[RMDB]
RNA sequence: GGGAACGACUCGAGUAGAGUCGAAAACAGAACCAUCGCUGCCACCCAACCAGCUGCUAUAAGCGGGAGGUUGAAGUGGAGGAAGGUCGGAAUAACUGAAUCUCGAAUGUGGUCAUGCUGACCAUCCACUAUAGACAUUCUUCGGAAUGUCUAUAGUAAAAGAAACAACAACAACAAC
Reactivity to DMS in 0.01 (KOAc 150mM, MgCl2 10mM, bicine 150mM(pH8.5), 24C), signal-to-noise 9, nucleotides 027 to 126: c050a060g000a140a110c020c010a060u000c050g010c060u010g000c000c010a030c010c080c010a020a010c020c010a080g000c010u000g010c030u000a120u010a120a110g020c010g010g010g010a270g010g000u000u000g000a100a170g010u000g000g000a050g010g000a080a150g010g010u000c100g010g000a070a040u010a090a090c040u000g010a090a120u010c020u000c050g020a100a090u010g020u000g000g000u000c010a090u010g010c190u000g010a020c010c000a030u010c190c100
Reactivity to 2A3 in 0.01 (KOAc 150mM, MgCl2 10mM, bicine 150mM(pH8.5), 24C), signal-to-noise 9, nucleotides 027 to 126: c010a010g050a050a020c010c000a020u040c060g040c170u150g090c000c010a010c010c010c000a000a000c010c010a050g150c010u020g000c020u110a060u080a300a070g000c010g000g030g040a060g010g000u000u010g010a070a000g000u020g010g020a020g030g030a080a070g030g030u100c130g050g080a090a080u150a090a050c040u050g050a060a090u030c030u020c090g100a180a140u300g020u030g070g000u020c030a060u260g160c140u100g030a020c000c000a010u030c020c010
Structure probing data (DMS and 2A3) for a 177-nucleotide construct. DMS (dimethyl sulfate) methylates the pairing face of unpaired adenines and cytosines. Source: RMDB library OK2TST, as collected in RNAgym. For 2A3 the reverse transcriptase was SuperScript II with manganese. The 2A3 profile rests on 31,323 reads.